Chemical mapping of a 177-nucleotide RNA with 2A3 and DMS. 2A3 adducts were read by reverse transcription with SuperScript II with manganese. For 2A3, 2,410 sequencing reads were counted. For DMS the reverse transcriptase was MarathonRT.
RNA sequence: GGGAACGACUCGAGUAGAGUCGAAAAGUCCGCGUACCAUCCUUUCUUACCUGAUGGCCGGCAUGGUCCCAGCCUCCCCGCUGGCGCCGGCUGGGCAACAUUCCGAGGGGACCGUACCCUCGGUAAUAUGUUCACUUAAGUUCGCUUAAGUGAACAUAAAAGAAACAACAACAACAAC
Reactivity to 2A3 in 0.01 (KOAc 150mM, MgCl2 10mM, bicine 150mM(pH8.5), 24C), signal-to-noise 2, nucleotides 027 to 126: g060u020c010c000g020c040g020u070a090c000c030a070u050c000c050u060u150u120c040u120u080a180c020c050u100g060a070u100g080g060c000c010g040g000c060a090u120g120g010u060c000c010c010a000g010c000c030u070c000c020c010c000g010c010u030g050g000c030g010c030c000g010g020c020u040g040g040g000c020a030a010c020a080u200u030c000c020g000a000g010g010g020g010a060c070c070g050u140a090c030c010c000u010c000g000g000u000a000a010u010
Reactivity to DMS in 0.01 (KOAc 150mM, MgCl2 10mM, bicine 150mM(pH8.5), 24C), signal-to-noise 2, nucleotides 027 to 126: g010u000c010c010g010c100g010u000a090c030c010a040u010c030c080u000u000u000c090u020u000a150c090c070u010g030a130u000g020g010c040c000g010g020c010a090u010g000g000u020c300c010c000a020g000c010c060u010c060c030c050c210g000c040u000g020g020c180g020c020c010g000g000c000u010g010g010g000c080a070a080c100a130u000u010c000c000g010a010g000g000g020g000a100c200c200g000u010a120c000c000c000u000c000g000g010u000a000a100u010
Conditions: 150 mM KOAc, 10 mM MgCl2 and 150 mM bicine (pH 8.5), 24 C.